[RMDB]
RNA sequence: GGGAACGACUCGAGUAGAGUCGAAAAAGCCAUACCAUUACGAUGGUAUGGCAAGUCCGUGACGGCGAUGGAUCCCGCCUGGCCGACGCCGAACUGCCGAUCUGGCUGAUGGUUCCUGCCCCGUCAAAAAACGUAAAGCACUUCGGUGCUUUACGAACGUAGUAUUUUGGUUCGCCAAAAUACUACGAAAAGAAACAACAACAACAAC
Reactivity to DMS in 0.01 (KOAc 150mM, MgCl2 10mM, bicine 150mM(pH8.5), 24C), signal-to-noise 2, nucleotides 027 to 156: a140g000c010c000a040u000a010c010c010a050u000u000a090c270g010a230u020g030g030u000a000u000g010g030c040a000a030g000u000c030c030g000u000g020a050c030g000g040c060g020a180u000g000g000a050u000c020c000c040g010c000c000u000g000g000c030c010g000a050c030g000c040c030g000a070a060c070u010g050c040c010g000a060u000c020u000g000g030c010u010g030a170u000g010g010u000u000c000c000u010g010c040c100c010c000g000u020c010a000a020a070a040a070a150c010g000u000a020a050a030g020c000a000c010u020u000c260g090g030u020g000c000u000u000u010a010c000g020a020a050
Reactivity to 2A3 in 0.01 (KOAc 150mM, MgCl2 10mM, bicine 150mM(pH8.5), 24C), signal-to-noise 4, nucleotides 027 to 156: a000g000c000c000a000u000a000c000c000a000u030u060a070c250g130a030u010g000g010u000a000u000g000g000c000a000a000g030u000c010c010g020u040g020a000c000g010g020c100g030a020u050g000g010a020u040c010c000c010g030c010c030u030g020g010c000c020g030a030c030g030c050c050g120a200a130c080u110g050c020c010g110a220u050c060u110g010g000c020u040g040a130u100g010g000u020u010c000c000u030g010c010c010c000c010g000u000c000a030a020a020a000a040a050c010g000u000a000a000a010g000c000a000c010u030u100c240g100g000u000g000c000u000u000u000a000c000g000a020a000